[RMDB]
Structure probing data (DMS) for a 177-nucleotide construct. For DMS, 1,615 sequencing reads were counted. Values are in units of 0.01, from 0 to 300, in steps of 10. Values cover nucleotides 27 to 126.
RNA sequence: GGGAACGACUCGAGUAGAGUCGAAAAAAAUACCUUCGUGAUGUGGUUGUGGUAAUCAAGAUUAAUUGAUUACAAAGGGCAAUAUAUUAUUGCCCUUUUGUUUUUAAAAGAUCGGGUUCGCCCGAUCGAUUACCACCAUGUUCGCAUGGUGGUAAUCAAAAGAAACAACAACAACAAC
Reactivity to DMS in 0.01 (KOAc 150mM, MgCl2 10mM, bicine 150mM(pH8.5), 24C), signal-to-noise 2, nucleotides 027 to 126: a060a070a080u000a030c010c000u010u000c150g000u010g000a100u010g000u000g000g020u000u020g010u000g000g000u000a010a010u000c010a030a050g010a160u030u020a110a120u000u000g000a020u000u000a010c010a010a000a010g000g000g020c000a020a020u010a080u000a100u020u010a020u000u000g000c000c000c010u000u000u000u000g000u000u020u030u000u000a040a090a140a160g010a000u000c000g020g000g020u010u010c290g010c000c000c000g000a000u000c000